[RMDB]
RNA sequence: GGGAACGACUCGAGUAGAGUCGAAAAGUUGAAGUGUUCGCACUUCAACAAACGCUCAACUCAUGGAGGGCAAGACGAAUAGCUACAUAUUCGACAUGAGAAAAAGACUGUAGUUCGCUACAGUCAACUAUCAGGAAGCGUUCGCGCUUCCUGAUAGAAAAGAAACAACAACAACAAC
Reactivity to 2A3 in 0.01 (KOAc 150mM, MgCl2 10mM, bicine 150mM(pH8.5), 24C), signal-to-noise 1, nucleotides 027 to 126: g000u000u000g000a000a000g010u020g010u060u080c130g110c050a000c020u000u000c000a010a000c000a000a000a010c090g000c000u050c000a070a090c020u040c020a040u010g000g010a080g100g060g060c100a070a020g080a010c040g000a010a020u010a020g050c120u160a090c070a200u060a040u000u010c000g030a000c020a020u010g000a000g000a070a040a000a010a000g010a000c000u020g000u010a020g000u060u060c190g000c060u000a000c010a000g000u020c000a010a000
Reactivity to DMS in 0.01 (KOAc 150mM, MgCl2 10mM, bicine 150mM(pH8.5), 24C), signal-to-noise 1, nucleotides 027 to 126: g000u000u000g000a010a030g020u000g020u010u000c160g000c000a000c010u000u030c000a000a020c030a060a090a180c240g000c010u000c010a170a110c000u010c000a040u000g000g010a080g020g010g020c090a030a210g030a120c020g000a020a030u000a020g040c150u010a150c190a110u000a020u030u000c000g010a150c020a000u000g000a040g020a080a060a090a060a200g000a030c000u000g000u000a020g000u010u010c120g030c000u000a000c000a000g000u010c000a000a060
Chemical mapping of a 177-nucleotide RNA with 2A3 and DMS. For 2A3 the reverse transcriptase was SuperScript II with manganese.